[RMDB]
RNA sequence: GGGAACGACUCGAGUAGAGUCGAAAACAGGAUCUGACUGGGACAUGCUCUGUGGCUGGGCCUGUCGGCGACUUGUCUGCGUGAGCGCCGGGGCCGAGGAGAACGCUGAGCAGACUGCGCCCGGAGAAGCCCUGCUGCAGCAUCGAAGGACGCGGGUGCUCAUGGAAAAGUUCGCUUUUCCAUGAGCAAAAGAAACAACAACAACAAC
Reactivity to 2A3 in 0.01 (KOAc 150mM, MgCl2 10mM, bicine 150mM(pH8.5), 24C), signal-to-noise 1, nucleotides 027 to 156: c040a020g080g000a040u020c020u040g040a060c020u000g000g000g030a020c030a060u040g020c050u000c020u060g010u010g000g010c000u040g000g040g000c000c040u140g110u150c020g000g010c000g020a270c040u040u250g030u020c000u030g060c000g080u130g130a020g030c020g000c060c000g040g010g020g020c020c070g070a060g080g030a060g020a080a040c010g020c010u050g040a020g100c020a000g030a020c020u010g020c030g000c010c070c070g030g010a020g020a010a000g010c010c000c000u010g010c000u010g000c000a020g000c000a030u040c020g070a070a030g000g030a020c020g000c060g060g000g000u030
Source: RMDB library RSTRND, as collected in RNAgym. An RNA of 207 nucleotides, treated with 2A3 and read out base by base. The RNA was probed in 150 mM KOAc, 10 mM MgCl2 and 150 mM bicine (pH 8.5) at 24 C. For 2A3 the reverse transcriptase was SuperScript II with manganese.